[RMDB]
RNA sequence: GGGAACGACUCGAGUAGAGUCGAAAAGCCACUCCUGACAGUGGCCACGUACCUCGACAAGAAUGAGGCCACAGAGGCAUACCAGGAGGUCUCAGGCAGGACAUACACCCCGCUGGAUGGGGCGCCGCGCACCAGCUAAAUUCGUUUAGCUGGUGCGAAAAGAAACAACAACAACAAC
Reactivity to DMS in 0.01 (KOAc 150mM, MgCl2 10mM, bicine 150mM(pH8.5), 24C), signal-to-noise 3, nucleotides 027 to 126: g000c040c060a210c020u000c010c030u040g010a110c140a080g010u000g000g010c010c040a060c090g000u000a170c050c030u000c030g030a130c180a120a140g000a180a060u010g010a050g010g010c020c110a020c040a120g000a130g010g020c040a040u000a060c090c020a090g010g010a020g010g000u000c030u000c080a060g000g010c060a100g000g010a090c060a150u000a110c200a140c020c010c000c030g000c090u000g000g010a090u000g000g000g020g030c100g000c060c060g010
Reactivity to 2A3 in 0.01 (KOAc 150mM, MgCl2 10mM, bicine 150mM(pH8.5), 24C), signal-to-noise 2, nucleotides 027 to 126: g050c020c020a010c020u010c010c010u110g000a070c010a210g060u020g040g000c000c000a020c040g030u080a070c020c000u010c070g100a110c100a190a010g100a130a150u150g000a040g010g010c060c000a040c010a070g120a110g050g000c030a060u060a110c010c010a020g000g020a020g020g060u000c000u000c020a030g020g000c000a010g100g000a070c050a070u210a030c060a120c020c010c010c020g030c100u090g180g070a200u160g090g020g000g000c020g030c020c000g000
Overview: An RNA of 177 nucleotides, treated with DMS and 2A3 and read out base by base. For 2A3 the reverse transcriptase was SuperScript II with manganese. The RNA was probed in 150 mM KOAc, 10 mM MgCl2 and 150 mM bicine (pH 8.5) at 24 C. DMS adducts were read by reverse transcription with MarathonRT. It was measured as part of the RMDB library OK2TRN. The 2A3 profile rests on 1,877 reads.